RNA sequence: GGGAACGACUCGAGUAGAGUCGAAAAGCUGAGAUGUGCCUGGCACACAGCAGGUGUGGACCAAGGGAAGGCCAGCAGGUGUGGCUCCCAGUGGAAUAAAACCUUCCUUAAGAAGACCUGGCCCCUGCUACUCUUGCCUUUUCGAAGGCAAGAGUAGAAAAGAAACAACAACAACAAC
Reactivity to 2A3 in 0.01 (KOAc 150mM, MgCl2 10mM, bicine 150mM(pH8.5), 24C), signal-to-noise 2, nucleotides 027 to 126: g010c020u030g000a070g030a300u070g030u030g020c040c140u070g100g000c000a000c000a000c010a020g010c030a000g040g080u090g040u090g120g020a050c020c000a050a090g010g010g020a080a020g070g000c020c010a030g030c050a060g150g080u090g010u020g050g000c010u040c000c000c000a020g060u070g100g060a160a110u180a120a110a020a020c010c000u000u080c010c000u040u040a070a030g050a040a010g030a020c000c040u000g020g010c000c010c030c010u020g040
Reactivity to DMS in 0.01 (KOAc 150mM, MgCl2 10mM, bicine 150mM(pH8.5), 24C), signal-to-noise 2, nucleotides 027 to 126: g000c010u000g000a150g000a060u010g000u000g000c030c070u010g030g000c020a060c070a090c070a070g000c050a060g010g010u000g000u000g030g020a110c020c020a080a090g010g010g020a050a050g020g020c070c040a080g010c060a050g010g030u000g030u010g000g000c030u020c030c030c010a090g010u010g020g010a110a100u010a050a020a070a130c050c030u000u000c000c010u000u000a150a110g000a070a100g000a100c050c030u000g010g010c010c010c020c010u000g030

Source: RMDB library OK2TRN, as collected in RNAgym.
The record gives the reactivity of an RNA of 177 nucleotides to 2A3 and DMS.
2A3 adducts were read by reverse transcription with SuperScript II with manganese.
The RNA was probed in 150 mM KOAc, 10 mM MgCl2 and 150 mM bicine (pH 8.5) at 24 C.
For DMS the reverse transcriptase was MarathonRT.